[RMDB]
RNA sequence: GGGAACGACUCGAGUAGAGUCGAAAAAGCGCACGGAGUGUACGCACUCCGUGCGCAAGAUGUUAAGUAGGCACUUGCAGGCAAAGUUUCAUUCACAAUUUGACUGCUUUUUCCUACCUUACAUUAACAACAUUCCCUUGUUCGCAAGGGAAUGUUGAAAAGAAACAACAACAACAAC
Reactivity to DMS in 0.01 (KOAc 150mM, MgCl2 10mM, bicine 150mM(pH8.5), 24C), signal-to-noise 1, nucleotides 027 to 126: a080g010c030g070c040a020c000g060g010a030g130u020g070u040a080c240g050c030a000c000u000c000c000g090u010g000c010g080c000a000a010g010a010u000g050u010u000a010a000g030u000a010g000g000c210a000c020u000u010g000c000a030g020g000c060a030a000a010g000u000u020u030c130a130u030u010c240a100c140a040a060u000u030u000g000a040c010u030g000c010u040u000u000u010u000c000c000u000a000c010c000u030u000a010c020a020u010u020a110a160
Reactivity to 2A3 in 0.01 (KOAc 150mM, MgCl2 10mM, bicine 150mM(pH8.5), 24C), signal-to-noise 2, nucleotides 027 to 126: a000g000c000g050c000a010c000g030g010a010g000u050g040u050a030c200g000c040a010c020u000c000c040g060u000g000c030g000c000a000a000g010a030u020g000u040u020a020a000g000u020a000g000g000c030a000c000u000u000g000c010a000g000g010c010a040a060a080g050u160u110u120c070a250u170u180c110a170c050a240a200u010u010u010g000a000c010u000g000c000u000u000u000u000u020c000c000u000a000c010c000u020u050a010c000a010u080u110a090a040